[RMDB]
RNA sequence: GGGAACGACUCGAGUAGAGUCGAAAAUGAAAGCUGUGUGAGCGAGGCGGGCGGAGGAUGAGGCCGUGCCCGGGCUCUGGCUGCAGCCGCCGGGGGACACGCCGUGCACCCUCGGGCUCCGGAAAAAAUGAUAACCAUAGUUCGCUAUGGUUAUCAUAAAAGAAACAACAACAACAAC
Reactivity to DMS in 0.01 (KOAc 150mM, MgCl2 10mM, bicine 150mM(pH8.5), 24C), signal-to-noise 8, nucleotides 027 to 126: u000g010a080a100a090g010c030u000g010u010g020u000g010a070g020c080g000a070g010g010c030g000g000g010c020g010g010a080g020g000a130u010g010a110g010g020c040c050g020u000g010c020c010c010g000g010g010c020u010c040u000g010g000c030u000g010c080a070g010c020c050g010c020c000g010g000g000g000g010a260c040a050c070g020c110c080g000u000g010c060a070c010c000c000u000c010g010g000g000c040u000c020c020g010g000a000a020a050a050a070
Reactivity to 2A3 in 0.01 (KOAc 150mM, MgCl2 10mM, bicine 150mM(pH8.5), 24C), signal-to-noise 4, nucleotides 027 to 126: u180g020a050a060a020g010c030u020g020u030g030u090g140a040g040c050g010a020g020g060c040g010g000g040c030g010g050a060g060g030a050u130g070a050g080g100c070c040g020u060g020c010c010c000g030g050g010c010u030c020u030g080g000c030u080g010c030a010g020c010c030g020c000c000g010g000g020g000g010a020c010a000c060g150c050c020g020u010g000c020a200c020c000c010u010c010g010g020g010c030u020c020c000g040g010a070a080a020a000a010
Chemical mapping of a 177-nucleotide RNA with DMS and 2A3. For 2A3, 8,916 sequencing reads were counted. The reactions ran in a buffer of 150 mM KOAc, 10 mM MgCl2 and 150 mM bicine (pH 8.5), at 24 C.